Source: RMDB library OK1LIB, as collected in RNAgym. An RNA of 177 nucleotides, treated with DMS and 2A3 and read out base by base. For DMS, 6,234 sequencing reads were counted. Conditions: 150 mM KOAc, 10 mM MgCl2 and 150 mM bicine (pH 8.5), 24 C. The 2A3 profile rests on 9,151 reads. DMS adducts were read by reverse transcription with MarathonRT.
RNA sequence: GGGAACGACUCGAGUAGAGUCGAAAAUGCACAGGGCUUAUUGGUCGGGAGAGAGCUCCCUCAGGAGGUGGCAGAGUACAGUGGCUCUGAGGAGUGUCUGCCACACAGAGAGUGCUCUUUGCUGUUAGAUAGCAAUUAGCUUCGGCUAAUUGCUAUCAAAAGAAACAACAACAACAAC
Reactivity to DMS in 0.01 (KOAc 150mM, MgCl2 10mM, bicine 150mM(pH8.5), 24C), signal-to-noise 3, nucleotides 027 to 126: u020g010c080a050c070a050g000g030g010c080u000u000a110u010u020g020g010u030c080g030g000g000a040g010a080g000a030g000c030u000c010c040c010u000c030a080g020g000a150g050g010u000g020g000c000a000g010a050g030u030a090c180a090g020u060g010g000c020u010c010u010g020a160g010g000a020g020u010g010u000c000u000g000c000c010a000c000a010c010a080g000a040g000a090g020u010g000c010u010c020u000u000u010g000c010u000g000u000u000a100
Reactivity to 2A3 in 0.01 (KOAc 150mM, MgCl2 10mM, bicine 150mM(pH8.5), 24C), signal-to-noise 6, nucleotides 027 to 126: u150g000c040a040c030a080g030g030g010c030u100u140a080u170u230g110g030u090c040g010g040g010a040g000a010g000a010g020c000u040c020c020c010u020c020a110g080g110a190g070g060u010g000g000c000a000g010a010g010u180a120c070a090g120u180g210g010c000u000c010u050g170a200g080g060a020g020u050g080u000c000u010g000c010c000a000c000a000c000a010g050a000g000a000g020u040g000c000u000c000u020u030u050g080c010u010g030u090u050a050